[RMDB]
RNA sequence: GGGAACGACUCGAGUAGAGUCGAAAACUCCGGCUAGCAGUUUACCCUUACCACCACAAGGAUGGGGAAUCUCCCCACCAGUAGCCACAUCCACUCCAGGAGCGGCAGGACAUAGCUCCAGUGCCGGUGGUCAUGAUUCGUUCGCGAAUCAUGACCAAAAAGAAACAACAACAACAAC
Reactivity to 2A3 in 0.01 (KOAc 150mM, MgCl2 10mM, bicine 150mM(pH8.5), 24C), signal-to-noise 2, nucleotides 027 to 126: c000u000c000c040g010g050c030u070a070g050c000a040g050u050u070u130a130c020c000c000u040u080a150c040c020a060c020c010a070c080a180a120g030g050a200u060g000g000g000g070a040a150u150c120u130c040c000c000c000a030c040c020a000g020u030a000g060c010c000a030c020a100u000c000c000a010c020u030c020c030a060g000g060a020g000c030g040g020c000a020g000g000a000c040a060u190a070g020c040u000c020c000a050g010u020g090c000c010g010g000
Reactivity to DMS in 0.01 (KOAc 150mM, MgCl2 10mM, bicine 150mM(pH8.5), 24C), signal-to-noise 1, nucleotides 027 to 126: c050u000c000c020g000g000c020u010a060g010c050a090g040u000u000u000a190c020c070c000u000u040a150c100c030a060c020c110a120c230a110a180g070g000a070u040g000g030g000g000a060a180u130c150u000c000c000c000c000a070c010c050a120g000u000a010g000c000c000a090c010a110u010c050c060a040c080u020c020c010a060g000g010a040g010c090g000g040c050a060g000g000a040c070a180u010a190g000c040u040c040c070a100g010u000g000c040c010g000g010
Source: RMDB library OK1LIB, as collected in RNAgym. This 177-nucleotide RNA was probed chemically with 2A3 and DMS. 2A3 adducts were read by reverse transcription with SuperScript II with manganese. For DMS, 1,298 sequencing reads were counted.